[RMDB]
RNA sequence: GGGAACGACUCGAGUAGAGUCGAAAAUACACCUAACCUACGGAACAUCAUAGCUUAGUGUCACCUACCUUAAACAUGCUUAGAACGCUUACAUUAGCCUACGGUUGGGCAAAAUCAUCUAACACAAAGCCUAUUUUAUGAUAAAGUAUUGAAUAUACCGUAGUGAUAUAUUCGUAUAUCACUACGGAAAAGAAACAACAACAACAAC
Reactivity to DMS in 0.01 (KOAc 150mM, MgCl2 10mM, bicine 150mM(pH8.5), 24C), signal-to-noise 3, nucleotides 027 to 156: u000a080c060a110c050c020u000a090a060c030c010u000a200c060g010g000a120a160c090a110u000c080a080u000a040g000c050u000u000a090g030u000g020u010c040a090c060c020u000a140c030c030u000u000a100a100a060c020a070u000g020c030u010u010a110g030a100a080c080g020c040u000u010a080c090a110u000u000a150g020c030c020u000a060c060g040g000u020u000g030g000g010c070a040a070a090a080u010c050a060u000c040u000a060a040c050a050c040a070a060a140g010c020c080u000a090u000u010u000u020a070u000g000a090u000a060a050a160g020u000a080u000u000g010a070a140u000a100u000a140
Reactivity to 2A3 in 0.01 (KOAc 150mM, MgCl2 10mM, bicine 150mM(pH8.5), 24C), signal-to-noise 6, nucleotides 027 to 156: u060a000c040a030c020c010u030a050a060c000c010u040a040c060g050g040a070a050c030a090u100c020a040u080a070g040c020u080u050a020g010u020g060u110c020a060c020c010u080a070c020c010u060u070a060a090a030c020a050u090g010c010u050u060a030g040a130a010c050g030c050u030u050a020c020a140u030u130a030g020c010c020u030a030c050g080g000u040u040g010g000g000c000a010a080a050a030u060c020a020u000c020u080a050a020c020a010c010a130a090a010g010c000c010u060a150u060u100u040u040a080u080g030a030u060a080a090a030g040u040a070u110u160g050a080a030u150a030u050a120